An RNA of 207 nucleotides, treated with 2A3 and DMS and read out base by base. For 2A3 the reverse transcriptase was SuperScript II with manganese.
[RMDB]
RNA sequence: GGGAACGACUCGAGUAGAGUCGAAAAAGCACAGCGGAAUCAGUGAUUGAAAACGCAUUAGCGAAUGAUAAAGAUGUGCGACGUAUGCGAGUUGAAAACGGCAAGCGUAAAGCGGAGUUCUUGCAAUCGCUGAAACUCAUUGCAGACGAAACAGAAGGUGUUCUCCUUUUUUCGAAAAGGAGAACACAAAAGAAACAACAACAACAAC
Reactivity to 2A3 in 0.01 (KOAc 150mM, MgCl2 10mM, bicine 150mM(pH8.5), 24C), signal-to-noise 4, nucleotides 027 to 156: a000g070c090a050c050a020g050c070g050g030a020a000u010c010a000g030u030g030a060u050u080g040a030a060a050a060c050g000c020a060u100u180a040g010c000g040a040a100u090g100a090u130a090a090a030g060a060u090g060u040g070c020g020a040c020g020u030a020u120g030c010g010a060g030u070u120g160a110a080a010a020c050g050g020c040a060a040g000c000g030u130a190a040a000g020c020g030g020a110g060u080u060c000u040u100g000c000a010a020u050c000g000c010u020g010a010a010a030c060u030c050a050u070u120g000c000a010g040a100c030g060a030a100a030c050a020g120a130a020g080
Reactivity to DMS in 0.01 (KOAc 150mM, MgCl2 10mM, bicine 150mM(pH8.5), 24C), signal-to-noise 2, nucleotides 027 to 156: a150g000c010a030c040a080g020c050g010g020a300a160u020c020a080g020u000g010a160u000u000g000a060a070a090a160c030g030c040a220u000u000a150g020c100g040a090a050u020g060a100u020a070a170a110g030a080u000g000u000g000c010g000a140c050g000u000a070u000g010c010g000a120g040u000u010g020a100a100a070a120c030g020g040c040a050a120g030c090g020u000a060a090a100g000c030g040g020a220g000u010u020c030u030u010g020c020a040a060u000c020g070c020u000g010a080a050a080c090u000c050a210u000u010g000c010a060g000a060c030g000a130a110a110c070a060g000a090a100g020
For DMS the reverse transcriptase was MarathonRT. The DMS profile rests on 3,434 reads. Values are in units of 0.01, from 0 to 300, in steps of 10. Conditions: 150 mM KOAc, 10 mM MgCl2 and 150 mM bicine (pH 8.5), 24 C.